[RMDB]
RNA sequence: GGGAACGACUCGAGUAGAGUCGAAAACUACCCCCAGGACUGACCCAGAGCUAUACCCCUCCAGGGCCGGUGGGAACACGAGUGGUUUUUGUGUGUGUAUGUGGCUUGCAGCUUGCAAGGGGGGUGGAAGCCUAGGAGUAUUCGUACUCCUAGGCUUAAAAGAAACAACAACAACAAC
Reactivity to DMS in 0.01 (KOAc 150mM, MgCl2 10mM, bicine 150mM(pH8.5), 24C), signal-to-noise 3, nucleotides 027 to 126: c040u000a160c000c000c000c020c020a160g000g000a090c060u000g010a100c030c030c020a170g020a060g010c070u010a090u010a110c050c040c030c010u000c020c050a120g010g010g010c030c030g020g020u000g000g000g010a120a050c020a050c030g000a050g010u000g010g010u000u000u010u000u000g010u010g010u000g030u010g000u000a060u010g020u000g000g010c000u000u000g000c040a090g000c110u010u000g010c050a050a060g020g000g000g010g000g020u000g000g000